[RMDB]
RNA sequence: GGGAACGACUCGAGUAGAGUCGAAAACCGAGUCGCCAAAAUUCAAACUAGACUCGUUAAAUGAAUGAAUGAUGCGGUAGACAAAUUGGAUCAUUGAUUCUCUUUGAUUGGACUGAAGGGAGCUCCCGGUGUACCUUGCGUUCGCGCAAGGUACACCAAAAGAAACAACAACAACAAC
Reactivity to 2A3 in 0.01 (KOAc 150mM, MgCl2 10mM, bicine 150mM(pH8.5), 24C), signal-to-noise 1, nucleotides 027 to 126: c000c000g190a000g000u060c080g010c000c000a030a030a030a030u140u150c050a140a050a060c000u030a000g030a050c050u000c040g000u040u080a030a200a000u160g000a050a000u010g000a000a040u040g060a000u000g000c010g000g070u210a050g010a040c040a000a100a000u090u050g180g030a000u000c040a040u000u160g160a000u030u060c000u000c000u000u180u230g040a100u000u100g150g010a010c030u000g140a060a000g000g060g030a060g000c000u120c000c060c000